Description: Chemical mapping of a 177-nucleotide RNA with DMS and 2A3. For DMS, 1,655 sequencing reads were counted. The data come from the RNA Mapping Database (RMDB), library OK1LIB. Values are in units of 0.01, from 0 to 300, in steps of 10. The RNA was probed in 150 mM KOAc, 10 mM MgCl2 and 150 mM bicine (pH 8.5) at 24 C.
RNA sequence: GGGAACGACUCGAGUAGAGUCGAAAAUUCGAAUGGCUGGGUUUUCCCAUCGCCACCGCGCUUCUCACCAUGGUUAUCGGGAUGCUGUUCGGCGCCACGAUUCCGGCGGCGGGUAUCUCCGGCGCGGGCUGCAUCAGGGAUUCGUCCCUGAUGCAGCAAAAGAAACAACAACAACAAC
Reactivity to DMS in 0.01 (KOAc 150mM, MgCl2 10mM, bicine 150mM(pH8.5), 24C), signal-to-noise 1, nucleotides 027 to 126: u020u000c040g000a170a070u000g000g010c020u010g000g050g000u000u010u020u000c000c010c000a040u030c270g000c010c020a100c000c000g000c010g020c030u000u040c000u010c100a130c130c040a040u060g000g050u000u080a060u000c060g050g000g000a000u030g000c000u000g020u070u110c040g010g030c030g000c000c000a080c300g000a100u020u040c130c080g040g070c090g020g050c000g000g000g010u000a020u030c070u000c020c110g010g020c010g020c000g050g020
Reactivity to 2A3 in 0.01 (KOAc 150mM, MgCl2 10mM, bicine 150mM(pH8.5), 24C), signal-to-noise 4, nucleotides 027 to 126: u090u040c020g060a060a020u040g010g030c020u030g040g000g040u050u070u090u150c010c000c000a020u080c090g000c000c000a000c000c000g000c000g020c000u140u050c000u030c050a110c020c030a160u250g160g000u110u140a100u100c010g000g000g010a020u040g000c020u100g090u290u150c060g040g020c000g040c000c010a130c050g190a140u150u100c090c100g030g000c000g040g050c010g030g000g000u040a020u020c140u040c030c020g010g000c000g010c000g020g000